[RMDB]
The data come from the RNA Mapping Database (RMDB), library OK1LIB. An RNA of 177 nucleotides, treated with 2A3 and read out base by base. The RNA was probed in 150 mM KOAc, 10 mM MgCl2 and 150 mM bicine (pH 8.5) at 24 C.

RNA sequence: GGGAACGACUCGAGUAGAGUCGAAAACGAGUAUGGUUAAGAAUGCCACUUUUAAUGAGAAUUUCGAAAACCUUGCAGACUCAUGAGGUUUAAACCGAUGGUGUUCUCAAGUAAUUGUGAAAUAGCCUACGAGUCGGCAUUUCGAUGCCGACUCGUAAAAAGAAACAACAACAACAAC
Reactivity to 2A3 in 0.01 (KOAc 150mM, MgCl2 10mM, bicine 150mM(pH8.5), 24C), signal-to-noise 2, nucleotides 027 to 126: c000g000a030g010u020a080u160g160g030u220u000a140a040g130a070a120u120g030c010c030a000c120u240u000u000u100a010a080u200g010a000g010a160a130u050u080u080c050g080a010a030a000a000c000c000u010u020g030c080a090g000a190c000u000c000a000u130g070a050g130g060u000u250u270a160a250a000c000c000g000a000u020g000g000u000g140u280u090c000u000c000a040a010g000u000a020a050u120u050g150u000g030a000a100a260u000a000g020c030c000